This 177-nucleotide RNA was probed chemically with DMS and 2A3.
Source: RMDB library OK2TST, as collected in RNAgym.

RNA sequence: GGGAACGACUCGAGUAGAGUCGAAAAUUUCGUACAUUUGAUACACAGAAAAGCCUAGACGAGUAAGGCUGUUCAAUACAAUUUCAUGAUAUGUUUGCUCACUAGUUUUGUAUUCUCCUGUGUCCUCAUCGCCUACGUACUUCGGUACGUAGGCGAUAAAAGAAACAACAACAACAAC
Reactivity to DMS in 0.01 (KOAc 150mM, MgCl2 10mM, bicine 150mM(pH8.5), 24C), signal-to-noise 1, nucleotides 027 to 126: u020u020u020c060g030u000a070c100a160u010u000u010g030a150u030a080c100a040c130a180g000a060a050a010a220g000c070c000u010a110g010a070c140g000a100g000u000a050a010g000g000c000u010g010u000u000c070a050a070u020a050c220a060a120u000u010u010c130a150u010g000a040u000a040u000g000u000u000u000g000c030u000c020a120c080u000a000g010u000u000u000u000g000u010a180u000u040c090u000c120c040u000g000u000g020u000c020c040u000c070
Reactivity to 2A3 in 0.01 (KOAc 150mM, MgCl2 10mM, bicine 150mM(pH8.5), 24C), signal-to-noise 1, nucleotides 027 to 126: u000u040u080c030g060u040a030c030a110u070u050u120g070a080u020a060c020a000c030a100g070a050a030a020a000g000c000c020u000a030g030a110c070g010a020g040u020a100a000g100g060c000u000g040u070u090c060a090a010u060a110c030a040a110u000u160u160c160a160u150g090a070u030a010u130g130u050u070u000g060c030u010c000a000c030u040a050g030u000u000u050u040g180u010a130u020u120c050u000c000c000u040g000u000g000u020c000c020u040c000